[RMDB]
RNA sequence: GGGAACGACUCGAGUAGAGUCGAAAAGUUACCAAUCAGCCAUUGAUACUGUCACCUGAACAAUAAAUAUGUCUACUAAAUAUUAGAUUGUUGAGCUUGGUUUAGUUGGAAACAGCAAUGUGCCAUUGAAAAAUAAUUUGUAAUUCAAAUAGCCAUAAUUAUUACGCAGGUUCGCCUGCGUAAUAAUAAAAGAAACAACAACAACAAC
Reactivity to DMS in 0.01 (KOAc 150mM, MgCl2 10mM, bicine 150mM(pH8.5), 24C), signal-to-noise 2, nucleotides 027 to 156: g010u000u000a030c000c010a050a080u000c080a160g010c080c070a160u000u020g010a120u020a050c040u000g040u000c050a150c040c030u000g000a030a060c030a090a140u000a060a060a090u010a080u010g000u010c060u000a190c100u000a110a050a080u000a060u000u000a140g020a060u010u000g010u000u000g010a110g040c130u010u000g040g010u000u000u000a070g030u000u000g000g010a120a040a100c030a090g000c050a050a090u010g010u010g020c030c050a100u000u040g000a010a050a120a080a090u010a090a100u000u000u010g000u000a100a100u000u010c010a050a060a100u010a100g000c010c010a020u000a060
Reactivity to 2A3 in 0.01 (KOAc 150mM, MgCl2 10mM, bicine 150mM(pH8.5), 24C), signal-to-noise 1, nucleotides 027 to 156: g000u010u070a080c000c000a000a040u070c000a010g060c000c000a070u060u010g050a090u050a180c020u000g000u010c000a000c050c010u010g050a040a000c000a060a030u160a170a060a030u210a060u110g000u030c070u030a110c000u040a170a060a110u150a070u120u020a030g050a060u080u170g000u020u020g010a010g100c030u030u020g010g000u100u080u090a030g010u050u020g030g000a070a150a000c000a010g010c000a000a020u030g030u070g050c020c020a000u010u010g030a040a020a000a050a100u110a000a060u070u070u030g010u120a000a120u120u000c000a000a060a050u070a030g020c010c000a020u000a240
Structure probing data (DMS and 2A3) for a 207-nucleotide construct. For DMS, 2,883 sequencing reads were counted. DMS adducts were read by reverse transcription with MarathonRT. Values cover nucleotides 27 to 156. The reactions ran in a buffer of 150 mM KOAc, 10 mM MgCl2 and 150 mM bicine (pH 8.5), at 24 C.